[RMDB]
RNA sequence: GGGAACGACUCGAGUAGAGUCGAAAAGAUAUGGAGUACGAUGAUACCGCCCGUAUGGAGCGUUGGGAUCGGAAACGAUCCCAAACGCUAUGAAGUACGUAACAAGUAUCAUCGUACUCCUAAGUCAUCGCGAACAGAUGUUCGCAUCUGUUCGCGAAAAAGAAACAACAACAACAAC
Reactivity to DMS in 0.01 (KOAc 150mM, MgCl2 10mM, bicine 150mM(pH8.5), 24C), signal-to-noise 1, nucleotides 027 to 126: g000a040u000a300u010g000g030a010g000u000a000c000g010a020u000g010a040u000a000c000c090g000c300c270c010g010u000a000u000g020g010a000g020c060g050u000u010g000g000g040a000u000c000g000g000a080a080a100c020g010a000u000c000c000c000a000a010a020c000g000c000u000a090u020g010a110a240g000u000a000c150g000u020a120a110c240a240a170g000u000a000u000c000a000u000c000g010u000a010c010u000c000c020u000a010a020g000u010c000a170